[RMDB]
RNA sequence: GGGAACGACUCGAGUAGAGUCGAAAACCUAGGUCGUUCGCGACCUAGGAAAUAAAAACAGCGGUAAAAAUCGAGGCGUUAUUACCGCUGAACGCCUCGAUAAAAGUUCUAUGUUCGCAUAGAACAACAUGCUAUAAUGCUUCGGCAUUAUAGCAUGAAAAGAAACAACAACAACAAC
Reactivity to 2A3 in 0.01 (KOAc 150mM, MgCl2 10mM, bicine 150mM(pH8.5), 24C), signal-to-noise 2, nucleotides 027 to 126: c010c000u000a000g000g010u000c000g010u060u020c200g000c010g110a000c000c000u000a000g000g010a000a020a010u090a010a020a010a010a020c040a020g060c060g120g040u120a110a150a070a030a000u030c030g000a010g010g010c000g010u000u010a060u080u080a110c060c010g000c030u010g010a000a000c000g000c010c000u000c010g010a000u050a020a130a000a010g000u010u000c000u000a010u020g020u000u060c160g000c080a000u000a000g000a000a010c000a000a000
Reactivity to DMS in 0.01 (KOAc 150mM, MgCl2 10mM, bicine 150mM(pH8.5), 24C), signal-to-noise 2, nucleotides 027 to 126: c000c000u000a000g000g010u000c010g020u010u010c230g020c030g020a000c010c000u000a000g000g000a000a020a030u000a030a040a060a090a090c080a030g000c040g010g020u020a050a070a020a120a020u000c000g010a020g000g000c000g010u000u000a070u010u000a070c040c010g010c040u000g020a010a000c020g030c010c000u000c000g000a030u010a020a030a080a110g000u000u000c000u000a000u000g010u000u010c210g020c020a020u000a010g000a000a020c010a080a170
An RNA of 177 nucleotides, treated with 2A3 and DMS and read out base by base.
DMS adducts were read by reverse transcription with MarathonRT.
2A3 adducts were read by reverse transcription with SuperScript II with manganese.
The RNA was probed in 150 mM KOAc, 10 mM MgCl2 and 150 mM bicine (pH 8.5) at 24 C.
For 2A3, 3,750 sequencing reads were counted.